[RMDB]
RNA sequence: GGGAACGACUCGAGUAGAGUCGAAAAAUCAUCUGAAGAUCAGCUAUUAGAAGAGAAAGAUCAGUUAAGUCCUUUGGACCUGAUGAGCUUGAUACAAGAACUACUGAUUUCAACUUCUUUGGCUUAAAAAAGGCCACAGAGUUCGCUCUGUGGCCAAGAAACGUAUCUUGUUCGCAAGAUACGUUUCAAAAGAAACAACAACAACAAC
Reactivity to 2A3 in 0.01 (KOAc 150mM, MgCl2 10mM, bicine 150mM(pH8.5), 24C), signal-to-noise 3, nucleotides 027 to 156: a000u050c020a010u040c070u180g060a120a040g040a180u110c050a000g000c010u050a110u250u050a220g000a020a000g020a010g040a050a050a010g040a010u000c000a000g010u040u080a120a000g000u000c010c020u080u130u180g040g030a070c020c070u100g090a200u130g040a110g100c030u090u080g070a050u110a250c040a030a000g000a080a040c030u060a020c010u060g000a000u000u010u020c050a120a090c000u000u000c000u000u010u010g000g000c010u020u010a070a020a000a000a020a000g000g000c020c020a010c000a000g040a030g050u090u120c180g070c130u000c010u000g020u000g000g000c000c010a000a000
Reactivity to DMS in 0.01 (KOAc 150mM, MgCl2 10mM, bicine 150mM(pH8.5), 24C), signal-to-noise 1, nucleotides 027 to 156: a130u000c070a110u000c040u020g000a180a170g030a110u010c100a010g020c000u000a050u010u000a050g030a030a020g020a110g010a240a230a020g000a030u000c020a030g020u000u020a110a040g000u000c000c030u000u000u020g030g000a050c040c000u020g020a170u000g010a150g040c030u000u010g040a150u000a040c030a000a030g000a010a050c030u000a060c010u010g010a040u000u000u000c020a130a300c010u000u000c010u000u000u000g000g010c000u000u000a010a010a060a060a170a150g040g060c020c000a010c010a030g020a030g020u000u000c300g030c070u030c000u010g040u010g010g020c010c000a010a020